[RMDB]
RNA sequence: GGGAACGACUCGAGUAGAGUCGAAAAGCAGCGUGAUGCGGCGCCAGCAUCAGAAGGGCCAAAAGGAGCGCCCGGCGGAUCCGGCCGGGCGGGAAAAGAAAGCGCGUCGAUGAAAAGCCGGCUGGCCGAAGGGAAACUAAUUCGUUAGUUUCCCUUCAAAAGAAACAACAACAACAAC
Reactivity to 2A3 in 0.01 (KOAc 150mM, MgCl2 10mM, bicine 150mM(pH8.5), 24C), signal-to-noise 4, nucleotides 027 to 126: g010c050a010g030c020g070u080g040a050u080g050c030g010g000c000g020c020c020a020g020c010a040u080c010a030g080a120a070g030g020g000c010c020a050a060a040a080g090g000a050g050c000g000c000c000c000g000g010c020g000g070a140u100c070c040g050g000c010c000g020g000g000c000g000g000g020a080a080a010a040g110a030a060a000g030c040g000c010g040u050c020g020a060u110g060a030a060a060a000g010c000c020g030g010c020u050g040g000c010c020
Reactivity to DMS in 0.01 (KOAc 150mM, MgCl2 10mM, bicine 150mM(pH8.5), 24C), signal-to-noise 4, nucleotides 027 to 126: g020c040a050g000c040g020u010g020a060u010g010c030g010g010c050g000c060c030a080g000c020a040u000c050a080g010a140a080g000g000g000c050c040a050a110a170a140g020g000a300g000c030g020c010c000c000g030g010c010g010g000a130u040c140c130g020g040c000c010g020g000g000c000g000g000g000a090a060a080a080g000a090a120a120g010c020g000c010g000u020c040g010a060u020g000a050a100a100a160g000c040c040g010g010c090u000g000g000c060c110